Source: RMDB library OK2TRN, as collected in RNAgym. An RNA of 177 nucleotides, treated with 2A3 and DMS and read out base by base. DMS adducts were read by reverse transcription with MarathonRT. Conditions: 150 mM KOAc, 10 mM MgCl2 and 150 mM bicine (pH 8.5), 24 C.
[RMDB]
RNA sequence: GGGAACGACUCGAGUAGAGUCGAAAAUCGUCAGGACGCGGGGGGGCUCUGUGUUCAGAUCCGCAAAGGUCUGCGUGACUGCAGGAAUGUGGGCUCGGGAGGUGGUGCCGGCUCUCCGUGACCUGGCUCUCACCUACUAAUUCGUUAGUAGGUGAGAAAAAGAAACAACAACAACAAC
Reactivity to 2A3 in 0.01 (KOAc 150mM, MgCl2 10mM, bicine 150mM(pH8.5), 24C), signal-to-noise 2, nucleotides 027 to 126: u070c010g000u000c000a000g000g010a020c000g000c000g010g000g000g020g010g000g010c010u010c020u040g040u010g090u030u010c010a000g010a060u000c010c000g000c030a100a060a020g140g080u030c020u020g000c000g040u090g120a070c060u120g000c010a010g030g040a080a040u050g010u050g010g010g030c060u020c060g020g010g000a030g020g040u080g020g010u040g010c010c010g130g000c020u010c000u000c060c000g010u000g010a030c000c000u000g000g020c000
Reactivity to DMS in 0.01 (KOAc 150mM, MgCl2 10mM, bicine 150mM(pH8.5), 24C), signal-to-noise 7, nucleotides 027 to 126: u010c090g020u000c000a020g010g010a140c020g020c020g010g010g000g010g010g010g010c010u000c020u000g000u010g010u000u010c020a060g000a030u000c010c020g010c090a040a110a150g030g000u010c010u000g010c110g010u000g020a140c270u020g010c020a030g000g010a100a120u000g020u000g010g010g000c150u000c040g010g000g000a040g000g010u000g010g010u000g000c020c050g010g000c070u010c010u000c010c010g020u000g000a060c010c010u000g000g000c030